[RMDB]
RNA sequence: GGGAACGACUCGAGUAGAGUCGAAAAGAUAUGGACUCAAGCAACAGCUCCUAGUCGGAAACGACUAGGGAGACAUGCUUACGCGAGUCCUAAGUCAAACGGUAUAAUACUUCGGUAUUAUACCGAAGGAUACACUCUAGUUCGCUAGAGUGUAUCCAAAAGAAACAACAACAACAAC
Reactivity to 2A3 in 0.01 (KOAc 150mM, MgCl2 10mM, bicine 150mM(pH8.5), 24C), signal-to-noise 5, nucleotides 027 to 126: g010a010u030a020u080g000g010a000c010u020c040a020a020g000c000a010a200c070a300g050c000u000c000c010u010a000g010u000c000g010g000a030a020a010c000g010a000c000u010a020g060g050g000a010g020a020c060a060u060g020c000u060u060a110c300g110c120g080a000g000u000c010c000u000a020a000g020u000c030a110a050a060c020g000g000u000a010u000a010a010u020a010c000u020u090c300g080g000u010a000u000u020a000u010a000c000c000g000a010a010
Reactivity to DMS in 0.01 (KOAc 150mM, MgCl2 10mM, bicine 150mM(pH8.5), 24C), signal-to-noise 6, nucleotides 027 to 126: g000a020u000a260u000g000g000a020c000u000c010a040a140g010c020a040a080c300a140g000c020u000c000c000u000a000g010u010c000g020g000a070a050a130c000g000a020c000u000a030g020g010g000a010g010a070c100a130u000g000c040u000u000a100c210g020c290g000a020g000u000c000c000u000a020a080g000u000c020a060a080a250c020g000g000u010a010u000a010a010u010a010c010u000u020c190g020g010u010a000u010u000a000u000a000c000c000g010a010a010

Notes: Chemical mapping of a 177-nucleotide RNA with 2A3 and DMS. 2A3 adducts were read by reverse transcription with SuperScript II with manganese. The reactions ran in a buffer of 150 mM KOAc, 10 mM MgCl2 and 150 mM bicine (pH 8.5), at 24 C. The DMS profile rests on 6,703 reads.